[RMDB]
RNA sequence: GGGAACGACUCGAGUAGAGUCGAAAAGGGGUCUCGGUUAUGUAAGGCUAUUAUCUUCUUGGAUUUAUAGGUCUGAAGCCUCCACGGACCUAUUGUCAGAAGUGUAGCUUAUGUAAACCGAGACGGAGGCACCCAAACUAGUCGUUCGCGACUAGAAGCCCAUACAAAACUUCGGUUUUGUAUGGGCAAAAGAAACAACAACAACAAC
Reactivity to 2A3 in 0.01 (KOAc 150mM, MgCl2 10mM, bicine 150mM(pH8.5), 24C), signal-to-noise 1, nucleotides 027 to 156: g030g000g030g000u010c000u000c010g010g000u010u030a070u050g090u180a050a290g090g030c020u000a010u080u110a090u110c010u040u050c050u110u150g140g000a040u080u300u080a010u060a020g000g000u010c010u010g010a100a020g030c000c030u000c000c000a010c010g010g000a000c020c000u000a010u010u020g020u000c090a080g010a020a000g000u000g000u010a030g000c000u010u010a010u110g000u040a070a090a130c000c010g000a010g000a000c000g010g000a000g000g060c000a050c000c000c020a020a080a100c030u040a000g010u000c010g030u130u210c300g020c030g160a030c080u050a030g030a010a100